[RMDB]
RNA sequence: GGGAACGACUCGAGUAGAGUCGAAAAGGGGUCGGAUUGUCAGGGAUCGCACUAGGCUUGGAUUUACAGGCUGAAGCCUCCACGGCCUGUUGUCAGCCUAAACGAUCCCUUGGAUUUAUCCGACGGAGGCACCCAAACGGUCUCUUCGGAGACCGAACGUCUAAUAUUACUUCGGUAAUAUUAGACGAAAAGAAACAACAACAACAAC
Reactivity to 2A3 in 0.01 (KOAc 150mM, MgCl2 10mM, bicine 150mM(pH8.5), 24C), signal-to-noise 2, nucleotides 027 to 156: g090g000g020g010u010c000g000g000a020u040u040g020u050c040a030g000g000g000a000u010c000g020c060a110c160u040a010g020g000c030u060u230g120g000a060u230u240u160a020c000a000g000g010c010u030g060a080a030g030c040c020u020c010c010a010c010g010g010c000c000u010g000u010u040g020u010c010a020g000c000c000u010a040a090a000c010g010a000u010c000c000c020u000u050g010g000a010u070u080u180a020u010c010c000g000a000c000g000g000a000g010g000c020a040c020c010c000a030a070a010c020g000g000u000c000u000c000u050u060c190g090g000a000g000a010c000c000g000a020a020
Reactivity to DMS in 0.01 (KOAc 150mM, MgCl2 10mM, bicine 150mM(pH8.5), 24C), signal-to-noise 1, nucleotides 027 to 156: g000g000g010g000u000c000g030g030a030u000u000g020u000c040a080g020g020g000a020u000c020g000c050a140c160u000a060g000g000c010u000u020g040g010a100u000u000u000a030c030a020g000g000c010u000g010a020a150g020c070c040u000c020c050a300c010g000g010c010c030u000g000u000u010g020u010c040a070g020c010c000u000a020a080a030c000g000a020u000c000c000c010u020u010g020g000a100u000u010u000a060u000c010c000g000a040c000g010g030a030g030g040c020a110c010c030c000a050a100a220c020g030g000u000c000u000c000u020u020c270g000g000a050g030a030c000c000g000a000a040